[RMDB]
RNA sequence: GGGAACGACUCGAGUAGAGUCGAAAAGAUAUGGAUCUAACAGGGAGAUCGUCGGAAACGAUAGAUCGACGAUCUGUGGAUCCUAAGUCAAAAUCAGCAAGCAAGUGUUCGCACUUGCUUGCUGAAAUCAACUUAAUAAGUUCGCUUAUUAAGUUGAAAAAGAAACAACAACAACAAC
Reactivity to DMS in 0.01 (KOAc 150mM, MgCl2 10mM, bicine 150mM(pH8.5), 24C), signal-to-noise 4, nucleotides 027 to 126: g000a030u010a300u000g000g000a000u000c000u000a040a040c010a020g000g000g010a050g010a010u000c000g010u000c010g010g000a120a100a210c020g010a030u000a090g020a010u000c000g000a050c250g000a010u000c000u010g010u000g010g000a010u010c010c010u010a050a100g010u000c050a090a060a130a130u000c000a000g020c000a010a000g010c010a010a010g010u000g020u000u010c180g010c000a000c010u000u000g010c000u000u000g000c000u010g000a000a030a090
Reactivity to 2A3 in 0.01 (KOAc 150mM, MgCl2 10mM, bicine 150mM(pH8.5), 24C), signal-to-noise 4, nucleotides 027 to 126: g030a000u080a040u160g000g010a000u000c010u080a300a090c000a020g000g040g000a020g000a010u000c000g000u000c000g020g020a090a060a050c030g020a010u220a300g020a020u090c010g180a090c010g000a020u010c000u010g000u010g020g010a000u000c000c000u020a130a000g020u020c030a010a010a000a300u030c010a000g010c010a000a000g000c030a010a000g000u010g050u120u200c240g060c110a030c010u000u000g000c010u000u000g010c000u000g000a000a000a000

Conditions: 150 mM KOAc, 10 mM MgCl2 and 150 mM bicine (pH 8.5), 24 C. The record gives the reactivity of an RNA of 177 nucleotides to DMS and 2A3. Values are in units of 0.01, from 0 to 300, in steps of 10. For 2A3 the reverse transcriptase was SuperScript II with manganese. For DMS the reverse transcriptase was MarathonRT.